[RMDB]
RNA sequence: GGGAACGACUCGAGUAGAGUCGAAAAGCCUUACGAUUCGUCGUAAGGCAUACAAAGUUUUGGCACUUUGAGCCCGCAGCGUUGGUGCUCCCACGCGGUGCAAUACGACGGAUUUCGAUCCGUCGAACAAUGGGAUGUCCUUCGGGACAUCCCAUUGAAAAGAAACAACAACAACAAC
Reactivity to 2A3 in 0.01 (KOAc 150mM, MgCl2 10mM, bicine 150mM(pH8.5), 24C), signal-to-noise 2, nucleotides 027 to 126: g020c000c000u000u000a000c000g000a000u000u090c170g040u000c000g010u150a000a010g000g040c000a010u040a000c010a000a030a020g020u030u070u230u290g220g050c130a010c040u030u020u000g010a010g000c000c000c050g030c030a010g010c010g030u070u170g020g050u180g070c010u100c020c020c010a020c000g000c020g000g060u120g050c070a050a060u140a150c000g000a010c010g010g000a000u060u060u030c030g020a030u030c010c010g000u000c000g000a050a000
Reactivity to DMS in 0.01 (KOAc 150mM, MgCl2 10mM, bicine 150mM(pH8.5), 24C), signal-to-noise 2, nucleotides 027 to 126: g000c010c000u000u010a000c000g010a030u000u000c170g000u010c000g010u010a010a000g010g030c000a010u000a030c020a050a030a020g020u000u010u010u000g050g010c130a070c000u000u000u000g010a100g020c000c010c010g020c070a130g000c010g010u010u000g030g020u020g010c210u010c060c010c040a070c090g000c030g000g000u010g010c080a100a080u010a120c020g020a020c000g010g000a040u000u000u020c190g000a020u000c000c000g000u000c000g000a080a090